[RMDB]
RNA sequence: GGGAACGACUCGAGUAGAGUCGAAAAGGCAGCGAAUUCGUUCGCUGCCAAUACAGGACGUGGAGCCGGCUUCACGGCGCACGUCGAUGACGCCCGGGCCGGAGAAUCCAGAUUUCGAUCUGGAUAAUGGUGUAGGUUAGUUCGCUAACCUACACCAAAAAGAAACAACAACAACAAC
Reactivity to 2A3 in 0.01 (KOAc 150mM, MgCl2 10mM, bicine 150mM(pH8.5), 24C), signal-to-noise 1, nucleotides 027 to 126: g000g010c010a020g000c010g000a000a020u050u090c190g060u150u010c000g000c010u000g000c010c000a000a000u010a000c000a010g120g060a020c020g030u030g000g050a080g040c010c000g020g040c070u250u270c120a120c040g000g020c020g000c020a000c010g030u000c010g000a140u050g070a020c020g050c070c000c000g000g000g000c040c010g090g010a090g080a040a050u000c020c000a020g020a000u050u090u090c190g090a040u000c010u010g030g000a000u040a010a100
Reactivity to DMS in 0.01 (KOAc 150mM, MgCl2 10mM, bicine 150mM(pH8.5), 24C), signal-to-noise 2, nucleotides 027 to 126: g010g020c000a000g020c000g010a020a050u000u010c210g000u000u000c000g010c010u000g000c010c000a000a010u000a070c100a110g010g000a010c000g010u000g000g010a180g040c020c010g000g040c250u020u000c200a110c030g050g010c020g010c030a010c020g000u010c020g010a040u000g020a120c130g000c030c010c050g000g020g030c030c020g000g010a090g020a110a080u000c000c000a010g000a010u010u000u030c180g000a030u000c000u000g010g000a000u000a010a090